[RMDB]
About this RNA
Chemical mapping of a 177-nucleotide RNA with 2A3 and DMS. The reactions ran in a buffer of 150 mM KOAc, 10 mM MgCl2 and 150 mM bicine (pH 8.5), at 24 C. In probing experiments dimethyl sulfate is read out at A N1 and C N3, which are open when not base-paired.

RNA sequence: GGGAACGACUCGAGUAGAGUCGAAAAGUGCGUUACGGCACAGGGAGCCACAGAAGGGCUUCUUGAUAAAAUUACGCCAUGGAGUUCGGAAGUAUGUCUGACACCUAAAAAGAAUGUAUAUACAUGCUAGUUCCCUUCAGUUCGCUGAAGGGAACUAAAAAGAAACAACAACAACAAC
Reactivity to 2A3 in 0.01 (KOAc 150mM, MgCl2 10mM, bicine 150mM(pH8.5), 24C), signal-to-noise 1, nucleotides 027 to 126: g090u130g000c010g120u140u170a060c050g020g030c060a010c000a100g050g000g000a000g000c010c000a040c000a180g170a220a090g120g000g000c000u000u000c000u000u030g050a070u110a070a070a000a000u180u090a000c070g000c040c000a020u140g000g050a040g000u040u160c030g010g010a000a000g070u300a000u180g080u000c000u000g100a000c000a050c040c000u030a080a190a000a000a000g080a040a090u130g070u000a180u000a040u060a170c010a000u010g000c060
Reactivity to DMS in 0.01 (KOAc 150mM, MgCl2 10mM, bicine 150mM(pH8.5), 24C), signal-to-noise 1, nucleotides 027 to 126: g000u040g000c000g010u000u070a130c300g000g030c200a240c000a070g000g000g000a000g000c000c000a020c120a280g070a100a190g000g000g000c000u070u000c010u000u020g000a000u010a000a100a150a010u000u000a110c000g040c000c020a060u000g000g050a170g000u000u110c050g000g000a030a030g000u000a010u020g050u000c000u060g000a140c170a180c050c000u000a070a000a110a210a150g000a070a060u040g000u000a000u000a050u100a000c120a000u000g000c100